Source: RMDB library OK1LIB, as collected in RNAgym. The record gives the reactivity of an RNA of 177 nucleotides to 2A3.
RNA sequence: GGGAACGACUCGAGUAGAGUCGAAAACGGCGAUGAGUGCGUUCAACGCCUGGGUACUGUUGAAAGGCCUUGAGACGCUGGCUAUUCGGGUGCAACACAGCAAUGCCUCGGCGCAGCGGAUCGCGGACCAGUUGGGCUCAUUCGUGAGCCCAACUGGAAAAGAAACAACAACAACAAC
Reactivity to 2A3 in 0.01 (KOAc 150mM, MgCl2 10mM, bicine 150mM(pH8.5), 24C), signal-to-noise 1, nucleotides 027 to 126: c000g000g000c000g000a040u040g010a110g290u090g120c000g110u210u030c190a050a050c000g000c000c000u010g000g000g030u080a040c000u040g040u050u080g120a130a030a000g010g010c000c000u130u160g000a000g040a090c010g000c050u080g020g060c000u260a300u130u120c080g010g000g000u000g120c000a180a040c250a200c040a050g000c000a050a030u030g000c000c000u070c120g030g000c050g000c030a050g000c000g010g050a000u040c030g000c000g000g030a010